[RMDB]
RNA sequence: GGGAACGACUCGAGUAGAGUCGAAAAGGACAAGUAGGCGUCGACCACGGUGGUAUCCCCGCGCGGGACCAGUUUCAUCAGCGGGCUGACCUCAGAUGACAACGAGAUCUGGGCGAAGCCGAUGCGCUAAUUUCGAAGUGUUCGCACUUCGAAAUUAAAAAGAAACAACAACAACAAC
Reactivity to DMS in 0.01 (KOAc 150mM, MgCl2 10mM, bicine 150mM(pH8.5), 24C), signal-to-noise 2, nucleotides 027 to 126: g010g010a040c070a070a120g020u000a060g030g000c060g020u000c020g040a150c070c040a060c090g030g000u000g000g000u000a140u000c040c030c030c080g020c130g030c070g050g000g020a050c070c030a110g020u000u000u000c010a070u000c080a110g020c060g020g000g000c040u010g000a300c300c040u000c020a000g000a000u000g010a150c160a090a090c300g000a170g000a030u010c030u000g000g000g010c000g000a100a030g000c000c000g020a030u020g020c080g030c080